About this RNA
Structure probing data (2A3 and DMS) for a 207-nucleotide construct. Values are in units of 0.01, from 0 to 300, in steps of 10. The RNA was probed in 150 mM KOAc, 10 mM MgCl2 and 150 mM bicine (pH 8.5) at 24 C. The 2A3 profile rests on 17,429 reads.

[RMDB]
RNA sequence: GGGAACGACUCGAGUAGAGUCGAAAAGAUAUGGAGGUCGAUAAGUAUGGGAAUGUAGCACACUACCCACCUUGCAUCGGAAACGAUGCAAGAGGUGUGUAUUAUAGCCCAUACUUUUGACGACCUCCUAAGUCAAAGGAAGUGUUCGCACUUCCAAGGAUAUUAUAGUGUUCGCACUAUAAUAUCCAAAAGAAACAACAACAACAAC
Reactivity to 2A3 in 0.01 (KOAc 150mM, MgCl2 10mM, bicine 150mM(pH8.5), 24C), signal-to-noise 8, nucleotides 027 to 156: g040a020u080a060u170g000g000a000g000g000u010c020g010a070u020a090a000g000u000a000u010g000g000g030a170a220u090g020u050a010g020c010a000c000a010c020u160a130c030c060c030a080c000c010u010u000g000c000a000u000c000g010g010a040a040a030c010g000a000u000g000c000a000a000g000a000g000g000u000g010u000g010u000a170u060u100a020u030a030g070c000c000c000a000u000a000c000u010u000u000u030g050a020c000g000a000c000c000u000c000c000u000a000a000g000u010c050a050a030a060g000g010a010a010g000u020g030u090u190c220g070c130a000c000u000u000c000c010a000a040
Reactivity to DMS in 0.01 (KOAc 150mM, MgCl2 10mM, bicine 150mM(pH8.5), 24C), signal-to-noise 3, nucleotides 027 to 156: g010a050u010a290u010g000g010a040g020g020u000c010g020a180u000a020a040g000u000a020u010g000g020g010a110a200u000g020u000a150g020c000a030c010a010c000u020a020c030c010c020a300c150c000u010u000g000c000a020u020c000g050g000a190a100a280c020g010a000u000g000c000a000a010g000a040g010g020u020g020u000g010u000a020u000u000a020u010a030g010c010c000c000a010u000a010c000u000u000u000u010g010a240c110g000a040c000c020u000c000c010u000a010a110g000u000c070a140a140a130g000g010a020a050g000u000g000u010u010c060g010c030a010c010u000u000c000c000a020a300